[RMDB]
RNA sequence: GGGAACGACUCGAGUAGAGUCGAAAAUAAAGCGCUGACUAUGCACGAAAUAGCUAUAUGGUUCGCUCAAGAAUAUAGUCUUGUUAAACGUGGAAACGAUAACUGUAUUUUUAAUUACGUCAGCUGCCUUCUAAGAGUCCUUCGGGACUCUUAGAAGAAAAGAAACAACAACAACAAC
Reactivity to 2A3 in 0.01 (KOAc 150mM, MgCl2 10mM, bicine 150mM(pH8.5), 24C), signal-to-noise 1, nucleotides 027 to 126: u060a030a120a000g060c020g060c000u010g000a000c020u010a010u070g000c060a000c080g040a040a020a060u050a040g000c050u020a000u000a030u120g250g050u120u060c050g030c050u060c080a080a010g080a100a000u130a000u060a120g040u090c090u100u140g050u020u100a040a270a080c080g030u070g040g040a090a160a040c020g000a020u040a100a010c040u000g010u120a090u010u130u000u000u060a020a140u040u020a040c050g020u010c000a000g010c040u100g000c000
Reactivity to DMS in 0.01 (KOAc 150mM, MgCl2 10mM, bicine 150mM(pH8.5), 24C), signal-to-noise 2, nucleotides 027 to 126: u010a060a120a150g060c030g020c030u000g010a020c040u010a050u010g000c190a080c220g000a000a050a050u000a100g000c060u010a030u000a070u000g000g000u000u000c040g010c110u010c140a040a110g000a080a070u000a030u000a040g010u010c080u020u000g000u000u000a030a080a110c050g000u010g000g010a080a080a080c070g000a110u000a010a020c020u000g000u020a000u000u000u000u000u010a040a120u000u000a020c130g010u000c000a010g010c000u000g040c040
Chemical mapping of a 177-nucleotide RNA with 2A3 and DMS. For 2A3, 744 sequencing reads were counted.